This 177-nucleotide RNA was probed chemically with DMS and 2A3. For DMS the reverse transcriptase was MarathonRT. Conditions: 150 mM KOAc, 10 mM MgCl2 and 150 mM bicine (pH 8.5), 24 C.
RNA sequence: GGGAACGACUCGAGUAGAGUCGAAAACAGUCGCGAAGCGUAAAACCGUCAUGUGCGGUGACGAGAUUAAUCGCGGCACUCGGCAGACGACCAUUACGUUUAAAAACAUCGCUGGAGGCAGCAUAAAGGUCAUAUAGCCAUUCGUGGCUAUAUGACCAAAAGAAACAACAACAACAAC
Reactivity to DMS in 0.01 (KOAc 150mM, MgCl2 10mM, bicine 150mM(pH8.5), 24C), signal-to-noise 2, nucleotides 027 to 126: c170a160g010u000c010g000c010g010a060a120g000c050g000u000a010a070a060a100c070c070g000u010c010a080u000g020u000g010c070g000g000u000g000a050c010g020a070g000a110u010u010a120a070u000c010g000c000g020g000c000a080c040u000c010g030g000c000a040g000a070c020g000a120c060c110a140u000u000a030c100g000u010u010u010a030a120a090a040a100c130a090u000c130g000c020u000g010g000a090g000g000c060a060g010c040a170u020a070a050a080
Reactivity to 2A3 in 0.01 (KOAc 150mM, MgCl2 10mM, bicine 150mM(pH8.5), 24C), signal-to-noise 2, nucleotides 027 to 126: c020a000g010u000c000g000c050g090a060a010g100c050g010u030a140a130a030a000c000c000g040u010c060a300u240g070u190g120c000g000g050u000g000a000c010g020a000g010a100u130u200a100a150u170c010g000c000g000g030c000a050c030u050c000g000g000c010a010g000a090c000g090a090c040c040a040u000u100a030c060g010u070u020u190a080a070a000a000a010c040a060u230c110g000c000u030g000g000a010g080g060c030a000g000c050a030u090a060a140a020